RNA sequence: GGGAACGACUCGAGUAGAGUCGAAAAGAUAUGGACAUAUUACGUCCCACAUUACCUUUUGACGGAUCCAGGUCGGAAACGACCUGAAGAUCCGAUAAGGUAGUGGGACGUAAUAUGUCCUAAGUCACUCUCAGCUAAUGUUCGCAUUAGCUGAGAGAAAAGAAACAACAACAACAAC
Reactivity to DMS in 0.01 (KOAc 150mM, MgCl2 10mM, bicine 150mM(pH8.5), 24C), signal-to-noise 1, nucleotides 027 to 126: g010a010u000a300u000g010g010a000c010a000u000a000u000u020a000c010g030u000c000c000c000a010c020a120u030u010a000c000c000u020u000u000u000g020a300c110g020g000a000u000c020c010a040g030g000u000c000g000g010a090a090a240c000g030a010c020c000u000g000a060a080g010a000u000c010c000g010a000u000a000a000g000g000u000a020g020u010g000g000g000a020c020g020u000a000a020u000a020u000g000u000c000c000u000a010a090g010u010c040a180